[RMDB]
RNA sequence: GGGAACGACUCGAGUAGAGUCGAAAAGGGGUCUUCGGGCGGAGGCAUAAGCUUUUGACGCUCUGAAGCCUCCACGGAGCGAUAAGCUUAUGAACUACCUCCGUGCGAAGACGGAGGCACCCAAAGGUCGCCCAUGGAUUCGUCCAUGGGCGACCAACGUAUCAUAAUGUUUCGACAUUAUGAUACGAAAAGAAACAACAACAACAAC
Reactivity to 2A3 in 0.01 (KOAc 150mM, MgCl2 10mM, bicine 150mM(pH8.5), 24C), signal-to-noise 1, nucleotides 027 to 156: g050g000g000g010u000c000u020u000c020g040g090g000c010g010g000a000g000g040c010a020u000a010a010g000c030u050u230u300u300g110a040c060g010c010u000c010u000g050a110a040g000c030c010u000c000c010a010c010g000g010a010g010c030g020a050u110a300a050g000c000u000u010a010u020g030a030a060c040u100a100c300c000u000c010c000g000u040g030c000g000a010a000g000a000c010g000g000a010g020g000c010a030c000c000c020a080a080a000g000g020u010c010g000c040c000c000a000u000g020g030a040u060u210c220g010u040c160c000a000u040g000g010g010c000g000a000c000c000a000a000

Structure probing data (2A3) for a 207-nucleotide construct. Source: RMDB library RNAMAK, as collected in RNAgym. Conditions: 150 mM KOAc, 10 mM MgCl2 and 150 mM bicine (pH 8.5), 24 C. For 2A3, 1,303 sequencing reads were counted.